[RMDB]
RNA sequence: GGGAACGACUCGAGUAGAGUCGAAAAAAGAGGAUUACUCUUCUUAUGACAAGUCAUCUGAUUUAACGAAUGCCGCUGGUCAGGGUAAUGGUAUUUUAUAUCGUAUUGUCAGUAUAACUGCGGGAAAGUAUUACGCACGGUUCGCCGUGCGUAAUACAAAAGAAACAACAACAACAAC
Reactivity to DMS in 0.01 (KOAc 150mM, MgCl2 10mM, bicine 150mM(pH8.5), 24C), signal-to-noise 1, nucleotides 027 to 126: a020a050g020a120g000g010a200u020u000a130c050u000c020u000u000c020u010u000a120u020g010a030c100a070a030g000u010c040a070u000c070u000g000a140u000u010u010a040a090c100g000a080a040u000g000c030c010g030c040u000g000g000u000c030a020g000g010g010u000a080a030u000g000g000u000a000u000u000u000u000a090u010a040u010c060g000u000a100u000u000g000u000c030a040g020u000a050u030a100a100c080u000g010c070g030g000g000a070a060a110
Reactivity to 2A3 in 0.01 (KOAc 150mM, MgCl2 10mM, bicine 150mM(pH8.5), 24C), signal-to-noise 2, nucleotides 027 to 126: a000a000g060a010g010g040a080u100u150a120c010u010c020u080u060c010u100u130a260u230g060a030c020a070a020g050u030c010a030u060c050u080g090a110u000u040u090a030a020c000g040a040a020u050g080c000c010g000c130u030g000g010u010c040a020g040g000g000u050a060a040u040g000g020u010a020u040u050u060u030a180u010a020u080c010g010u050a050u080u100g030u040c010a000g050u030a070u050a260a080c020u040g020c060g000g060g040a000a130a040